Chemical mapping of a 207-nucleotide RNA with 2A3 and DMS. 2A3 adducts were read by reverse transcription with SuperScript II with manganese. The reactions ran in a buffer of 150 mM KOAc, 10 mM MgCl2 and 150 mM bicine (pH 8.5), at 24 C. For DMS the reverse transcriptase was MarathonRT. For DMS, 2,171 sequencing reads were counted.
RNA sequence: GGGAACGACUCGAGUAGAGUCGAAAAGAAACCCUGGGAGCAUGCCGAGGGGCGGUUGGCCUCGUAAAAAGCCGCACCGUUAUAGUUGCAAACGACUCUAACUACUCUCUAGCAGCUUAGGCUAGCUAGCCAUCUGACACAGGUCUCUCAAAUGGGCGCUGUAUAAUAACUUCGGUUAUUAUACAGCAAAAGAAACAACAACAACAAC
Reactivity to 2A3 in 0.01 (KOAc 150mM, MgCl2 10mM, bicine 150mM(pH8.5), 24C), signal-to-noise 2, nucleotides 027 to 156: g030a040a050a020c020c000c050u050g010g010g020a020g050c040a050u080g050c040c000g030a030g030g010g000g010c000g010g010u000u040g040g000c000c020u050c050g040u090a100a080a050a050a000g000c030c010g010c040a040c040c030g000u010u050a030u010a100g010u000u060g080c130a120a100a110c110g030a020c010u000c000u060a050a020c020u100a040c020u040c020u050c010u100a020g000c000a000g010c020u030u060a080g000g050c000u010a040g000c000u020a040g000c010c010a060u050c050u080g080a010c010a000c000a130g080g060u020c010u000c000u000c020a080a090a110u140g010g040g000c070
Reactivity to DMS in 0.01 (KOAc 150mM, MgCl2 10mM, bicine 150mM(pH8.5), 24C), signal-to-noise 1, nucleotides 027 to 156: g030a230a090a120c010c000c010u040g050g020g050a050g070c020a110u020g020c020c030g020a130g040g020g050g010c020g040g090u000u000g040g000c030c030u020c120g040u000a050a110a100a100a080g020c020c020g000c040a110c120c020g000u010u010a110u000a130g010u000u000g000c050a120a120a150c070g030a050c030u010c070u020a100a110c000u000a060c030u000c070u000c050u000a090g000c010a040g000c030u010u000a060g060g030c010u000a050g030c010u000a090g010c060c030a040u000c010u000g050a120c070a090c050a070g010g010u000c020u000c000u010c030a020a070a060u010g010g030g010c130